RNA sequence: GGGAACGACUCGAGUAGAGUCGAAAAGAUAUGGAUGCAGGACAUGAGCCCUAUCGGAAACGAUAGUGCUCAACAGCCUGUAUCCUAAGUCAAAAGACGAUAAAACAGUUCGCUGUUUUAUCGUCAAUCAUUCCUGUAACUUCGGUUACAGGAAUGAAAAAGAAACAACAACAACAAC
Reactivity to DMS in 0.01 (KOAc 150mM, MgCl2 10mM, bicine 150mM(pH8.5), 24C), signal-to-noise 4, nucleotides 027 to 126: g000a020u010a220u010g000g000a000u000g010c000a000g000g000a040c060a220u000g020a020g020c000c080c000u010a010u010c010g000g000a090a050a060c000g000a010u000a010g010u000g010c000u000c000a020a030c250a130g000c000c000u000g010u000a010u010c000c000u010a000a060g000u000c010a100a060a150a160g000a020c000g010a020u000a000a010a010a000c010a010g010u000u010c240g010c000u000g000u020u000u010u000a000u000c000g000u000c010a010a080
Reactivity to 2A3 in 0.01 (KOAc 150mM, MgCl2 10mM, bicine 150mM(pH8.5), 24C), signal-to-noise 2, nucleotides 027 to 126: g000a000u020a010u080g000g000a000u000g000c000a000g050g040a190c090a290u220g000a010g010c020c000c020u000a000u010c000g010g000a020a020a000c010g000a000u000a000g000u010g000c000u010c000a010a000c000a010g010c010c000u000g010u010a000u000c000c000u000a000a000g000u000c010a000a010a020a150g000a000c010g000a000u000a020a010a010a010c000a000g040u120u140c260g100c210u010g000u000u010u000u000a000u000c000g010u000c000a000a000
Background:
The data come from the RNA Mapping Database (RMDB), library TTRDEL. The record gives the reactivity of an RNA of 177 nucleotides to DMS and 2A3. The DMS profile rests on 5,384 reads. DMS adducts were read by reverse transcription with MarathonRT. The reactions ran in a buffer of 150 mM KOAc, 10 mM MgCl2 and 150 mM bicine (pH 8.5), at 24 C. For 2A3, 8,827 sequencing reads were counted.